[RMDB]
An RNA of 177 nucleotides, treated with DMS and 2A3 and read out base by base. For 2A3, 1,461 sequencing reads were counted. Reactivities are given for positions 27 through 126.
RNA sequence: GGGAACGACUCGAGUAGAGUCGAAAAGAUCCGUGACGGCUGGUGGGACGAGUGGUACGACGGCGAAAACGGUUGGGAGAUACCGUCUGCCGACGGUGUGGCGGACGAGAACCGUCGCGACGACCUGGUGGUCGUCAGUGUUCGCACUGACGACCACAAAAGAAACAACAACAACAAC
Reactivity to DMS in 0.01 (KOAc 150mM, MgCl2 10mM, bicine 150mM(pH8.5), 24C), signal-to-noise 1, nucleotides 027 to 126: g020a160u000c010c030g010u010g010a030c060g020g020c090u010g020g000u000g010g020g020a020c080g000a140g030u000g020g010u000a120c020g020a070c070g020g000c030g000a050a060a110a020c080g010g000u020u000g000g000g000a170g010a110u000a050c060c010g000u000c030u000g000c060c040g020a060c020g020g030u010g030u010g000g000c040g000g000a050c080g010a120g020a070a090c010c020g000u000c020g040c050g000a070c080g020a060c040c050u030g030
Reactivity to 2A3 in 0.01 (KOAc 150mM, MgCl2 10mM, bicine 150mM(pH8.5), 24C), signal-to-noise 1, nucleotides 027 to 126: g040a050u010c010c020g040u020g010a060c030g040g050c040u040g000g150u110g070g030g030a010c020g010a060g060u090g020g020u160a020c020g020a020c010g010g000c020g000a140a020a000a000c040g050g040u040u040g030g060g000a140g010a050u070a060c010c000g030u000c020u030g030c000c010g040a040c040g010g060u110g000u060g070g050c030g010g010a010c040g000a020g030a080a030c020c000g000u020c010g000c030g000a040c040g020a020c010c010u060g110
The reactions ran in a buffer of 150 mM KOAc, 10 mM MgCl2 and 150 mM bicine (pH 8.5), at 24 C.